[RMDB]
RNA sequence: GGGAACGACUCGAGUAGAGUCGAAAAGGAGGCAAGUUCGCUUGCCUCCAAAGAAGGUCAAAUUGACGCAAACAUCCGCGUCAUCGCGAGCAAGCGAGGAAAAAACCGUGAACUUCGGUUCACGGAACAUUAAAACUAUGUUCGCAUAGUUUUAAUGAAAAGAAACAACAACAACAAC
Reactivity to 2A3 in 0.01 (KOAc 150mM, MgCl2 10mM, bicine 150mM(pH8.5), 24C), signal-to-noise 7, nucleotides 027 to 126: g000g000a000g000g010c010a010a000g010u030u060c080g020c070u000u000g010c010c000u000c000c000a000a000a000g000a010a010g120g080u160c080a020a110a180u150u090g010a000c000g000c010a050a230a120c070a220u110c100c080g000c000g010u010c010a010u020c010g000c020g020a050g120c030a120a030g010c010g030a040g080g000a060a160a020a020a010a020c000c000g000u000g000a000a010c010u030u050c200g070g000u000u000c000a000c000g000g010a000a000
Reactivity to DMS in 0.01 (KOAc 150mM, MgCl2 10mM, bicine 150mM(pH8.5), 24C), signal-to-noise 9, nucleotides 027 to 126: g010g010a010g000g010c000a010a010g010u010u020c230g020c000u000u000g010c000c000u000c000c000a010a030a070g010a100a090g000g010u010c100a050a100a120u010u000g000a010c010g020c010a090a100a120c180a110u010c130c100g000c000g010u000c010a050u000c040g010c040g000a110g020c190a090a100g000c020g010a050g010g010a010a050a060a080a090a070c000c000g010u000g000a010a000c000u000u010c170g020g010u000u000c000a000c000g010g000a030a040
Structure probing data (2A3 and DMS) for a 177-nucleotide construct. The DMS profile rests on 23,281 reads. Conditions: 150 mM KOAc, 10 mM MgCl2 and 150 mM bicine (pH 8.5), 24 C.